[RMDB]
RNA sequence: GGGAACGACUCGAGUAGAGUCGAAAAAUAGCAUUGGAGAAGCCUCAAGCCCCAUUGCCUAUCUGGUUUUUGUCACUACACUCACUAGUGAUUAUACGAUUACAGUCUUUGUUACUGUCAACCUUGCACCUUAUAGUAUGUUCGCAUACUAUAAGGUAAAAGAAACAACAACAACAAC
Reactivity to 2A3 in 0.01 (KOAc 150mM, MgCl2 10mM, bicine 150mM(pH8.5), 24C), signal-to-noise 7, nucleotides 027 to 126: a000u060a010g000c020a020u010u040g040g020a180g050a230a020g030c020c030u130c080a050a020g000c000c020c000c000a020u020u040g000c010c010u050a070u070c060u060g140g040u040u050u010u090u160g010u010c010a010c010u020a020c050a030c080u110c020a030c040u030a000g010u000g020a010u050u070a050u020a050c060g020a030u080u080a010c010a010g010u000c050u080u290u220g090u160u070a010c010u000g010u040c030a030a040c010c010u020u060g020c030
Reactivity to DMS in 0.01 (KOAc 150mM, MgCl2 10mM, bicine 150mM(pH8.5), 24C), signal-to-noise 9, nucleotides 027 to 126: a060u010a060g010c020a050u000u000g010g000a070g010a110a100g010c050c060u010c190a120a220g010c030c030c010c010a040u000u000g010c080c030u000a040u000c080u000g010g010u000u000u000u010u010g010u000c010a020c020u000a020c130a090c130u000c140a070c150u000a020g010u000g000a030u000u010a060u000a080c160g010a100u010u010a040c020a020g000u000c030u010u000u010g000u010u010a030c020u000g010u000c190a050a060c080c010u000u000g020c300